[RMDB]
RNA sequence: GGGAACGACUCGAGUAGAGUCGAAAAGAGAAGAUAGAGGAAAAACCUAUUAGGCAAACAAGCCAAAAGACAAGGAUACCCUUUCUCAAGCAUUGUUAGUUUAUGGGCUACUAGUAAGCGAAGAAUGCCUGAGAGAACAAUUCGUUGUUCUCUCAGGAAAAGAAACAACAACAACAAC
Reactivity to 2A3 in 0.01 (KOAc 150mM, MgCl2 10mM, bicine 150mM(pH8.5), 24C), signal-to-noise 4, nucleotides 027 to 126: g060a000g040a050a020g040a140u180a050g080a170g040g040a070a090a010a010a000c020c000u010a020u110u120a040g000g000c050a080a140a140c030a140a110g030c040c030a010a190a020a010g060a020c090a050a060g020g020a020u110a130c000c000c000u000u050u000c010u000c010a000a000g020c010a040u000u070g060u050u070a030g000u010u010u100a040u060g030g020g070c010u080a010c000u000a070g060u080a030a080g030c030g030a050a000g050a140a030u100g050
Reactivity to DMS in 0.01 (KOAc 150mM, MgCl2 10mM, bicine 150mM(pH8.5), 24C), signal-to-noise 3, nucleotides 027 to 126: g000a070g020a050a080g010a060u000a080g010a100g010g010a030a060a050a090a100c040c010u000a040u030u010a110g000g040c040a090a030a100c150a050a100g000c000c020a090a060a070a030g000a110c120a010a040g000g000a110u020a100c090c020c000u000u010u000c030u010c020a160a120g000c100a070u030u000g010u010u010a120g000u000u010u030a020u000g020g000g010c070u000a060c070u010a010g020u010a010a040g000c020g000a070a080g000a060a050u010g000
Conditions: 150 mM KOAc, 10 mM MgCl2 and 150 mM bicine (pH 8.5), 24 C. Chemical mapping of a 177-nucleotide RNA with 2A3 and DMS.